This 177-nucleotide RNA was probed chemically with 2A3 and DMS. For DMS, 1,906 sequencing reads were counted. Source: RMDB library M2PK90, as collected in RNAgym. For 2A3, 2,673 sequencing reads were counted.

[RMDB]
RNA sequence: GGGAACGACUCGAGUAGAGUCGAAAAUAAAACACGUAACGUGAGCACAGUCGGUAGUGCAGCAGGACCGAAACCUGCAGCGAAAGGGAUCAAGACCCUGUUCGCGCAAUAACCGAAGAAAAAAAAAUCUACCUCGAGUGUUCGCACUCGAGGUAGAAAAAGAAACAACAACAACAAC
Reactivity to 2A3 in 0.01 (KOAc 150mM, MgCl2 10mM, bicine 150mM(pH8.5), 24C), signal-to-noise 2, nucleotides 027 to 126: u090a000a010a000a000c030a000c020g120u210a250a010c100g000u050g090a020g030c030a010c010a060g040u010c000g010g020u020a020g000u020g030c030a000g020c000a000g020g050a090c060c170g010a100a010a030c000c010u010g000c020a010g000c010g010a000a000a000g050g000g000a030u210c130a100a020g140a180c010c000c000u050g260u020u010c000g000c000g000c020a010a140u060a100a040c000c010g020a010a050g090a070a060a030a010a000a000a000a000a020
Reactivity to DMS in 0.01 (KOAc 150mM, MgCl2 10mM, bicine 150mM(pH8.5), 24C), signal-to-noise 3, nucleotides 027 to 126: u020a070a060a120a120c070a020c030g010u020a080a100c120g010u000g000a170g000c000a030c020a040g020u000c010g010g000u000a060g010u010g020c000a150g020c010a000g010g010a100c080c170g000a080a090a070c000c000u000g020c000a180g010c010g010a000a100a010g020g010g000a080u010c290a030a170g000a110c030c000c000u000g000u010u000c000g000c000g000c140a040a030u010a100a010c010c010g020a030a100g050a040a000a010a000a070a040a050a050a110